[RMDB]
RNA sequence: GGGAACGACUCGAGUAGAGUCGAAAACGAUGAGACGCGUACCGUACAGCAAGAUACGCAACCGGUGAAAAGUGUCAAAACGGAGCUGAAACAGGCACUGUUGAGCGGAAUCUCUUUUGCCGUACCGUCUCGGACGGAAAUUCGUUUCCGUCCGAGAAAAAGAAACAACAACAACAAC
Reactivity to DMS in 0.01 (KOAc 150mM, MgCl2 10mM, bicine 150mM(pH8.5), 24C), signal-to-noise 2, nucleotides 027 to 126: c030g000a080u010g010a090g010a050c060g020c150g030u000a060c060c090g000u010a050c190a120g050c100a070a080g010a080u000a030c060g040c080a150a120c170c040g000g020u010g000a030a040a070a030g020u000g000u000c040a060a060a050a040c120g000g000a130g020c060u000g010a120a120a100c240a160g010g000c000a040c000u000g010u000u000g020a190g020c060g000g010a100a080u020c080u000c060u020u010u000u000g010c060c080g020u010a100c060c040g000
Reactivity to 2A3 in 0.01 (KOAc 150mM, MgCl2 10mM, bicine 150mM(pH8.5), 24C), signal-to-noise 1, nucleotides 027 to 126: c030g070a060u150g020a020g020a050c090g090c060g010u040a000c030c050g000u040a050c030a050g060c100a110a050g030a110u080a050c020g000c020a020a030c020c000g020g000u020g000a050a060a050a070g040u060g080u040c090a040a030a010a010c060g020g060a040g000c050u070g000a070a140a000c020a100g130g000c010a000c010u020g060u130u090g010a030g020c050g070g070a130a100u040c060u000c000u100u070u030u090g010c050c010g010u030a050c000c000g060